RNA sequence: GGGAACGACUCGAGUAGAGUCGAAAAUUACGCAGAGUUAGACUCUAUCAUCUAUAACGGACCAACUUCCGCAAUAGUAGUAACAACGGGAAUAUAGUUACCGUUUUCGACUAAGACAAACGGGGAUGCGCGCGCUGUAGGUUAUUUAAAGAAACUAAGUUAUGAUAGACUUCGGUCUAUCAUAACUAAAAGAAACAACAACAACAAC
Reactivity to 2A3 in 0.01 (KOAc 150mM, MgCl2 10mM, bicine 150mM(pH8.5), 24C), signal-to-noise 3, nucleotides 027 to 156: u120u060a050c080g000c110a010g000a000g090u080u150a030g020a080c000u000c010u060a020u140c060a010u000c030u100a100u050a190a050c030g000g030a030c060c040a050a070c050u080u010c000c000g010c020a030a080u030a080g120u020a010g030u070a040a050c070a010a030c090g020g010g070a100a010u160a030u070a110g140u060u110a050c010c000g000u000u010u040u090c040g000a000c040u020a060a060g040a020c050a070a170a030c030g000g000g010g000a000u070g000c040g000c020g000c000g000c070u040g010u040a000g000g010u040u030a050u110u250u160a050a090a030g020a020a050a000c040u190a090
Reactivity to DMS in 0.01 (KOAc 150mM, MgCl2 10mM, bicine 150mM(pH8.5), 24C), signal-to-noise 2, nucleotides 027 to 156: u010u010a100c070g020c070a110g050a190g000u020u000a160g000a130c020u000c020u000a100u000c020a100u000c070u000a090u010a130a070c030g000g010a120c070c060a100a110c100u010u000c010c000g040c060a070a120u000a020g000u000a040g010u000a040a100c060a060a080c040g000g010g020a070a120u000a160u000a090g000u000u000a070c030c000g040u010u000u000u000c040g000a130c050u010a100a090g020a100c130a030a060a100c040g000g050g010g010a100u000g030c080g030c070g000c030g000c030u000g000u000a020g000g020u000u000a060u000u000u010a030a090a100g010a130a010a200c050u010a110